RNA sequence: GGGAACGACUCGAGUAGAGUCGAAAAGAUAUGGAUUCGACCCUCGCUACACAGACUAUGAAGUCGGAAACGAUGGAGUCUGUUUAGCGAGCGAAUCCUAAGUCAAACUAGGACUUCGGUCCUAGAAGCUCAAUGGAACGUUCGCGUUCCAUUGAGCAAAAGAAACAACAACAACAAC
Reactivity to DMS in 0.01 (KOAc 150mM, MgCl2 10mM, bicine 150mM(pH8.5), 24C), signal-to-noise 1, nucleotides 027 to 126: g000a030u000a300u000g000g000a040u000u000c000g010a230c140c240c050u010c040g030c010u000a010c010a060c000a030g030a010c000u000a150u000g000a170a240g020u000c000g010g020a110a040a110c020g010a010u000g000g000a000g030u000c000u010g020u000u000u000a000g000c000g050a000g060c030g000a000a000u000c000c000u000a010a090g010u000c010a110a160a190c010u000a000g010g000a070c000u000u010c200g000g020u000c000c000u000a060g000a090a120
Reactivity to 2A3 in 0.01 (KOAc 150mM, MgCl2 10mM, bicine 150mM(pH8.5), 24C), signal-to-noise 1, nucleotides 027 to 126: g020a030u110a040u190g010g010a000u000u010c000g150a230c050c080c030u000c040g020c010u030a000c000a000c020a070g010a000c000u020a160u300g040a000a050g020u030c020g040g090a100a080a060c010g000a000u010g040g010a030g000u020c000u000g000u000u000u000a000g010c010g000a010g000c010g010a000a000u010c000c000u000a150a000g050u050c060a050a060a090c010u000a000g000g000a020c000u050u000c300g240g000u000c000c000u000a010g020a020a020